Source: RMDB library OK2TRN, as collected in RNAgym. The record gives the reactivity of an RNA of 177 nucleotides to DMS and 2A3. The 2A3 profile rests on 3,303 reads. 2A3 adducts were read by reverse transcription with SuperScript II with manganese. For DMS the reverse transcriptase was MarathonRT.
RNA sequence: GGGAACGACUCGAGUAGAGUCGAAAACGAUAGUCCCACGGCAUCACUGGGUCACUCUGGCUCCAGAAAUUGAGCUUCUGAGAUCGCGCCUCUUCCUCAGCGGCAACAUACUGAUCUGCUGUAUCAGACUUUUGUAGUUCUUCGGAACUACAAAAGUAAAAGAAACAACAACAACAAC
Reactivity to DMS in 0.01 (KOAc 150mM, MgCl2 10mM, bicine 150mM(pH8.5), 24C), signal-to-noise 4, nucleotides 027 to 126: c120g010a120u000a090g020u000c010c000c030a160c120g000g000c040a040u010c030a080c060u000g010g000g010u000c040a120c130u000c100u010g000g010c030u010c020c090a060g010a060a060a110u000u010g000a130g010c020u000u000c050u010g000a080g030a060u010c080g000c100g000c010c020u000c050u000u010c030c010u000c070a080g000c070g000g010c070a060a110c110a100u010a110c060u000g000a050u000c030u010g020c080u000g010u010a080u000c040a070g010
Reactivity to 2A3 in 0.01 (KOAc 150mM, MgCl2 10mM, bicine 150mM(pH8.5), 24C), signal-to-noise 3, nucleotides 027 to 126: c040g060a110u070a100g100u060c020c030c000a010c010g040g010c030a070u030c010a040c070u030g000g040g000u020c020a020c100u150c070u060g050g010c020u030c070c040a060g060a090a090a030u080u090g040a030g030c000u060u000c040u040g080a080g020a110u090c050g010c000g040c030c020u030c000u040u030c010c010u030c000a010g040c030g060g000c000a000a040c030a090u210a060c040u040g020a070u020c030u110g030c050u060g050u080a070u070c020a010g060